[RMDB]
Chemical mapping of a 207-nucleotide RNA with 2A3.
2A3 adducts were read by reverse transcription with SuperScript II with manganese.
The RNA was probed in 150 mM KOAc, 10 mM MgCl2 and 150 mM bicine (pH 8.5) at 24 C.
The data come from the RNA Mapping Database (RMDB), library M2RFPK.
The 2A3 profile rests on 551 reads.
RNA sequence: GGGAACGACUCGAGUAGAGUCGAAAAGGGGCUGACAGGAAUCGACAGUAGAGUGUCUCAUGUCAGUAAGCAUGCCGGGGAAUGGUGGUUUACCCCGUUAUCAAAUGAUUACCGACCAAUAAUUGGCUUAGCUCGUUGGGCUUCGGCCCAACGAGAAGAUGCCAGAUACCUUCGGGUAUCUGGCAUCAAAAGAAACAACAACAACAAC
Reactivity to 2A3 in 0.01 (KOAc 150mM, MgCl2 10mM, bicine 150mM(pH8.5), 24C), signal-to-noise 1, nucleotides 027 to 156: g000g000g000g060c010u010g030a020c000a030g060g060a050a060u200c090g020a060c040a030g140u150a040g040a100g070u070g020u000c020u010c010a020u070g040u020c010a000g040u050a040a000g010c070a020u110g140c000c000g010g000g000g040a000a010u000g010g010u000g030g000u020u000u120a110c040c000c000c000g070u060u020a030u060c000a000a030a030u050g010a040u070u120a010c040c010g180a150c090c040a080a040u200a160a100u140u080g070g040c040u040u050a010g110c000u020c020g000u000u000g010g000g000c010u000u050c180g100g000c000c000c010a000a000c000g000a000g000a000a000